RNA sequence: GGGAACGACUCGAGUAGAGUCGAAAAGUAUAUACAAGCUGAACCACCCACCAACAAGUCCCUGUCUAGCCUGGUUGUACAGUUGCUACAAUUUCAGGAAGAAGUUUUUGGCAAACAUGUCAGCAAUGCACCGCUCACUAAACUGCCGGUGAGUGCACUCACCAGGGAGUUUCGACUCCCUGGUGAGAAAAGAAACAACAACAACAAC
Reactivity to DMS in 0.01 (KOAc 150mM, MgCl2 10mM, bicine 150mM(pH8.5), 24C), signal-to-noise 1, nucleotides 027 to 156: g010u000a090u020a120u000a040c050a060a080g020c040u020g010a100a100c070c000a080c020c000c020a270c040c070a050a080c070a040a120g020u000c010c020c010u000g000u010c030u000a090g030c000c000u010g000g010u010u000g010u000a020c060a200g010u000u010g000c000u000a020c030a040a010u000u000u020c020a100g120g010a110a110g010a050a130g030u000u000u000u050u020g010g020c040a100a050a070c120a070u000g000u000c000a090g000c040a060a100u010g000c050a040c080c010g020c020u010c010a030c020u000a030a100a090c070u000g010c090c020g000g000u020g000a070g000u010g020c060a160
Reactivity to 2A3 in 0.01 (KOAc 150mM, MgCl2 10mM, bicine 150mM(pH8.5), 24C), signal-to-noise 3, nucleotides 027 to 156: g020u030a060u030a010u010a250c050a080a000g010c010u010g010a080a000c030c040a060c010c010c010a020c000c020a030a060c020a040a050g090u100c010c020c010u030g040u040c020u020a030g080c000c000u010g030g010u000u000g000u010a020c030a200g070u200u070g140c060u020a000c000a010a030u060u120u250c020a010g020g020a010a030g040a060a030g010u000u030u090u080u140g030g000c010a050a080a090c060a040u110g040u040c010a020g000c040a020a030u090g010c040a040c060c070g000c010u010c010a010c020u090a160a280a070c070u130g080c060c030g000g030u020g000a000g000u030g040c010a010